[RMDB]
RNA sequence: GGGAACGACUCGAGUAGAGUCGAAAACGCUCAAGAACUCGUGGAGUCUGGCUUCGUUGGAAUCAGGUCUUGAGUCAGCGGAAACGCCAAGGAUGUCUGUGAUGAAGCGUGUAUAGGCUGUCUCGACCGUAGCAUGACGUUUCGACGUCAUGCUACGAAAAGAAACAACAACAACAAC
Reactivity to 2A3 in 0.01 (KOAc 150mM, MgCl2 10mM, bicine 150mM(pH8.5), 24C), signal-to-noise 2, nucleotides 027 to 126: c050g050c000u010c000a040a090g090a160a030c020u020c050g100u080g020g040a020g030u060c030u030g080g000c000u030u040c030g080u030u060g050g090a110a110u080c020a070g020g050u060c000u070u140g020a030g070u050c020a000g000c000g000g030a020a080a060c050g000c000c000a040a050g110g010a020u120g090u120c040u060g180u070g080a070u070g030a020a000g010c010g010u030g020u060a110u060a100g060g050c020u000g030u040c000u020c020g020a030c020
Reactivity to DMS in 0.01 (KOAc 150mM, MgCl2 10mM, bicine 150mM(pH8.5), 24C), signal-to-noise 3, nucleotides 027 to 126: c180g020c010u010c060a130a080g000a100a140c020u000c040g040u000g010g030a130g010u000c030u000g010g000c030u000u010c030g020u010u020g000g010a070a110u000c090a060g000g000u010c010u000u010g020a060g020u000c080a030g000c030g000g010a090a080a100c080g000c010c010a120a120g010g000a070u000g000u010c060u000g010u000g020a070u000g010a190a060g000c000g010u000g010u000a060u010a130g000g030c020u000g000u000c010u000c010g000a090c150